[RMDB]
RNA sequence: GGGAACGACUCGAGUAGAGUCGAAAAAGGCGUUUUGGCUACCGUCGCAUCUGGCAGUUGCUGCGCCGUGAAGGGCUACAUGUUAAUCAUAAGCGCGUGUACAGGCUUUAUCACCUCAGUGGCCUGGCUGUUAGGUUUGGUUCGCCAAACCUAACAGAAAAGAAACAACAACAACAAC
Reactivity to 2A3 in 0.01 (KOAc 150mM, MgCl2 10mM, bicine 150mM(pH8.5), 24C), signal-to-noise 1, nucleotides 027 to 126: a000g020g000c000g020u050u030u300u200g020g110c000u020a030c040c000g060u030c030g000c060a220u060c050u100g010g020c000a030g020u080u050g070c010u030g030c000g020c000c060g000u000g070a140a100g060g030g010c010u010a000c050a140u120g010u030u160a150a100u180c100a070u050a150a000g080c140g000c000g100u040g030u010a060c050a050g000g040c000u100u070u100a120u080c080a090c070c000u030c000a060g010u010g000g040c010c010u020g030g030
Reactivity to DMS in 0.01 (KOAc 150mM, MgCl2 10mM, bicine 150mM(pH8.5), 24C), signal-to-noise 2, nucleotides 027 to 126: a090g000g000c030g030u000u010u000u010g010g020c040u000a010c040c030g020u010c090g000c220a140u020c090u010g030g010c030a060g010u000u000g010c060u000g010c040g000c040c020g020u000g000a120a060g010g010g020c020u010a050c130a060u000g010u010u000a070a130u010c130a080u000a130a060g010c080g010c030g020u000g000u000a090c060a090g000g020c020u010u000u000a120u000c100a100c060c050u000c070a050g010u010g000g010c020c020u000g000g000
This 177-nucleotide RNA was probed chemically with 2A3 and DMS.
The RNA was probed in 150 mM KOAc, 10 mM MgCl2 and 150 mM bicine (pH 8.5) at 24 C.
For 2A3, 958 sequencing reads were counted.
It was measured as part of the RMDB library OK2TRN.